[RMDB]
RNA sequence: GGGAACGACUCGAGUAGAGUCGAAAAAGCGUGCCCGGUGCCGACCAACCGGGACGACGCCCAUCUCCAGGACCCGCAUGUCGUCGUCAUCUUCUUCGGCCGCCUCUGCGGCGGGGGGCUUGGGGGCGUAUGGCGCUGACUUCGGUCAGCGCCAUACAAAAGAAACAACAACAACAAC
Reactivity to 2A3 in 0.01 (KOAc 150mM, MgCl2 10mM, bicine 150mM(pH8.5), 24C), signal-to-noise 2, nucleotides 027 to 126: a020g090c030g030u160g230c020c000c000g000g000u030g030c080c120g000a050c010c160a070a020c020c010g000g000g000a000c000g080a010c020g060c000c020c000a040u050c000u020c010c000a020g210g000a300c020c020c040g240c140a100u110g030u100c050g000u000c010g120u010c000a130u030c160u210u010c010u020u000c010g000g000c050c020g030c010c030u220c170u300g010c020g000g020c010g000g000g000g000g060g000c000u010u060g040g000g000g000g000c030
This 177-nucleotide RNA was probed chemically with 2A3. For 2A3 the reverse transcriptase was SuperScript II with manganese. For 2A3, 588 sequencing reads were counted. Source: RMDB library OK1LIB, as collected in RNAgym. Conditions: 150 mM KOAc, 10 mM MgCl2 and 150 mM bicine (pH 8.5), 24 C.